An RNA of 177 nucleotides, treated with DMS and 2A3 and read out base by base. Reactivities are given for positions 27 through 126. It was measured as part of the RMDB library 15KREP. The reactions ran in a buffer of 150 mM KOAc, 10 mM MgCl2 and 150 mM bicine (pH 8.5), at 24 C.
[RMDB]
RNA sequence: GGGAACGACUCGAGUAGAGUCGAAAAAUUAUGUGGAUUCCGUUACAGUUAAAGAGACUGUUGUUCAGUUUAAUUAUCGUAGAGACGGUCAACCAUUCUACGAGCGGUUUCCCCUCUGCGCUUUUACGUGUUAUUAACAGUUCGCUGUUAAUAACACAAAAGAAACAACAACAACAAC
Reactivity to DMS in 0.01 (KOAc 150mM, MgCl2 10mM, bicine 150mM(pH8.5), 24C), signal-to-noise 4, nucleotides 027 to 126: a060u010u010a070u000g030u000g010g000a170u000u010c020c010g010u000u000a080c130a110g010u010u010a010a050a100g010a210g010a020c020u000g000u010u010g000u010u000c040a090g000u000u000u000a060a080u000u000a050u000c000g010u000a020g000a190g020a070c140g010g010u010c250a090a130c040c020a120u000u000c040u010a040c090g010a030g010c010g010g000u000u000u000c000c000c020c060u010c090u000g000c120g020c080u000u000u000u010a090c270
Reactivity to 2A3 in 0.01 (KOAc 150mM, MgCl2 10mM, bicine 150mM(pH8.5), 24C), signal-to-noise 2, nucleotides 027 to 126: a010u160u070a100u140g080u100g000g030a020u100u000c020c010g000u010u040a030c040a070g010u060u060a040a060a020g110a010g010a020c010u020g090u170u120g110u180u160c030a040g000u060u020u020a050a060u050u040a030u050c000g000u010a000g000a010g010a060c100g030g000u060c040a070a170c050c000a020u090u000c010u020a030c060g010a000g020c010g000g000u020u030u000c000c010c010c020u010c060u150g070c110g040c010u050u040u060u050a030c060